[RMDB]
RNA sequence: GGGAACGACUCGAGUAGAGUCGAAAAGUGUGCUAUACUAGUAAGGUUGAAUGAAGCAACCCUUGGUGCUUAGCUUCUUUCACCAAGCAUAUUACACGCGGAUAACCGCCAAAGGAGAAAAGAUGAACUGCCCGACGAUUCUUCGGAAUCGUCGGAAGGAAUUACAGAAGUUCGCUUCUGUAAUUCCAAAAGAAACAACAACAACAAC
Reactivity to DMS in 0.01 (KOAc 150mM, MgCl2 10mM, bicine 150mM(pH8.5), 24C), signal-to-noise 1, nucleotides 027 to 156: g020u010g010u000g030c050u000a040u000a060c050u010a090g040u010a140a230g010g000u000u000g020a090a090u010g000a100a130g000c030a080a080c020c000c040u010u000g050g000u020g020c030u000u000a070g000c030u000u000c000u000u000u000c000a070c040c000a140a190g030c000a080u000a080u000u000a050c040a030c010g000c020g030g030a240u000a090a050c060c010g000c010c030a010a090a120g000g040a200g020a050a100a150a110g010a070u000g010a060a090c100u010g000c050c000c010g000a020c040g000a020u000u000c010u000u000c300g040g010a050a010u010c010g000u000c020g000g000a010a000
Reactivity to 2A3 in 0.01 (KOAc 150mM, MgCl2 10mM, bicine 150mM(pH8.5), 24C), signal-to-noise 6, nucleotides 027 to 156: g020u030g000u010g020c030u050a040u040a250c100u120a070g090u090a130a140g040g040u120u130g030a050a080u050g010a020a010g000c010a030a030c030c010c020u040u160g070g020u100g040c060u090u070a050g000c000u020u000c000u000u010u010c000a000c000c000a010a000g020c010a010u030a040u080u110a020c040a010c050g000c020g020g010a080u090a210a160c020c020g000c060c050a100a070a030g090g030a110g050a060a100a020a040g070a050u150g050a080a090c060u110g020c030c010c000g000a000c000g000a000u000u010c000u030u050c160g050g000a000a000u000c000g000u000c000g000g000a000a000
The record gives the reactivity of an RNA of 207 nucleotides to DMS and 2A3.
For 2A3 the reverse transcriptase was SuperScript II with manganese.
For DMS, 2,040 sequencing reads were counted.